[RMDB]
RNA sequence: GGGAACGACUCGAGUAGAGUCGAAAAAAUGUCUCUUUGUCUGGAACAGAGGGAGGUAUAUCAAUUUCGGUAGGCCGAGAUAUCGUUUCAGUCGUCAUUCUUCCAUUGACGAUUCGAUUGUUGCUCGCCUUCCAAUUAUGUUCGCAUAAUUGGAAGGAAAAGAAACAACAACAACAAC
Reactivity to DMS in 0.01 (KOAc 150mM, MgCl2 10mM, bicine 150mM(pH8.5), 24C), signal-to-noise 3, nucleotides 027 to 126: a130a020u010g000u000c000u000c010u000u000u010g000u000c050u020g010g030a130a030c060a000g010a030g010g010g000a020g000g020u020a030u010a090u010c250a080a170u000u000u010c050g020g000u000a090g010g020c030c000g010a070g000a100u020a080u000c020g020u000u000u010c010a040g000u000c000g000u000c000a010u000u000c170u010u000c190c130a090u000u000g010a010c010g000a010u000u000c120g010a100u000u010g000u010u000g010c060u000c100g000
Reactivity to 2A3 in 0.01 (KOAc 150mM, MgCl2 10mM, bicine 150mM(pH8.5), 24C), signal-to-noise 2, nucleotides 027 to 126: a000a010u070g000u000c000u000c000u040u040u040g120u020c030u110g190g100a180a060c010a050g040a010g040g020g000a040g010g080u040a110u000a020u240c110a120a110u020u010u030c030g070g010u030a000g220g120c020c010g010a000g030a060u120a050u140c000g020u000u000u000c020a000g000u000c020g030u000c010a010u100u010c020u130u000c120c020a060u000u040g010a000c010g020a000u040u010c040g130a170u010u110g030u010u020g010c000u010c020g020
Chemical mapping of a 177-nucleotide RNA with DMS and 2A3. Conditions: 150 mM KOAc, 10 mM MgCl2 and 150 mM bicine (pH 8.5), 24 C. 2A3 adducts were read by reverse transcription with SuperScript II with manganese. Reactivities are given for positions 27 through 126. For DMS the reverse transcriptase was MarathonRT. Source: RMDB library RFMREP, as collected in RNAgym.